[RMDB]
RNA sequence: GGGAACGACUCGAGUAGAGUCGAAAACAUAGCGUUGCACAAUGUGCGCCAUUAACAUUGUUUAUGCAAGCACGUUUCGCAAUGUACGGCGCAGAAACAUUGCCAACACAAAUACGCUUCACGAUGUAAAACAUCGGUGCGUUCGCGCACCGAUGAACUCUCAUAAUCUGUUCGCAGAUUAUGAGAGAAAAGAAACAACAACAACAAC
Reactivity to 2A3 in 0.01 (KOAc 150mM, MgCl2 10mM, bicine 150mM(pH8.5), 24C), signal-to-noise 7, nucleotides 027 to 156: c030a080u170a010g010c020g020u000u050g010c060a030c000a060a010u010g010u010g020c010g000c020c000a060u150u170a070a010c010a010u020u020g080u050u170u150a090u150g040c070a060a070g130c100a060c190g030u040u070u110c050g000c000a000a000u010g000u020a020c010g000g020c010g000c030a010g090a020a080a000c010a000u010u030g020c050c030a090a020c050a020c020a080a130a020u130a030c030g020c030u140u180c110a080c130g100a080u100g050u300a020a080a070a020c000a010u000c000g000g010u000g010c000g010u030u030c160g020c000g000c040a000c000c060g000a000u000g000a000a000
Reactivity to DMS in 0.01 (KOAc 150mM, MgCl2 10mM, bicine 150mM(pH8.5), 24C), signal-to-noise 2, nucleotides 027 to 156: c020a150u000a050g020c040g020u010u000g000c110a050c050a010a030u020g020u000g000c000g000c030c020a140u010u000a110a100c030a050u010u000g030u000u010u000a080u010g000c050a110a090g020c110a170c070g010u010u010u000c190g000c040a020a040u010g020u000a060c000g000g010c020g060c010a100g000a180a120a140c000a000u000u000g020c080c020a040a020c030a080c060a050a110a160u000a050c080g020c030u000u000c060a090c080g030a270u000g010u010a020a070a080a190c020a000u000c000g000g060u010g010c000g010u000u010c230g030c050g060c000a020c030c010g040a020u000g000a030a070

Chemical mapping of a 207-nucleotide RNA with 2A3 and DMS. The RNA was probed in 150 mM KOAc, 10 mM MgCl2 and 150 mM bicine (pH 8.5) at 24 C. The 2A3 profile rests on 5,675 reads. The DMS profile rests on 3,724 reads.